[RMDB]
RNA sequence: GGGAACGACUCGAGUAGAGUCGAAAAGUUAUAUGGCCCCGUUGAUCCUACUUUCUUACACAGAUUCUAUUCACUUAAGGCUGCAGUCCAUGGGUGGAAGAUGGUUGUGUGUGAUAAGGUACGUUCUAGAGGUUGUCCUUCGGGACAACCAAAAGAAACAACAACAACAAC
Reactivity to DMS in 0.01 (KOAc 150mM, MgCl2 10mM, bicine 150mM(pH8.5), 24C), signal-to-noise 1, nucleotides 027 to 129: g000u060u070a050u020a090u090g010g000c110c000c020c000g120u000u000g040a080u040c100c050u030a070c020u000u000u050c040u000u050a070c000a000c020a270g000a040u000u000c010u000a000u000u090c030a060c050u000u000a110a190g000g020c050u030g020c190a120g020u070c000c000a110u000g020g000g000u020g080g000a000a000g000a030u010g000g010u040u010g020u030g000u070g000u020g060a040u000a030a060g040g020u020a050c130g010u020u020c030u000a040g020a300
Reactivity to 2A3 in 0.01 (KOAc 150mM, MgCl2 10mM, bicine 150mM(pH8.5), 24C), signal-to-noise 2, nucleotides 027 to 129: g060u080u080a100u020a060u240g130g000c000c000c050c010g000u000u000g050a030u000c030c000u000a010c060u010u000u000c000u000u000a000c030a000c000a000g010a040u150u000c000u050a250u020u000c040a020c050u100u000a220a000g000g090c000u080g210c170a000g040u020c000c000a060u090g040g000g060u000g000g000a020a020g050a020u000g050g090u040u090g070u200g000u000g000u000g090a120u000a040a000g000g030u050a000c000g020u080u000c040u060a040g000a020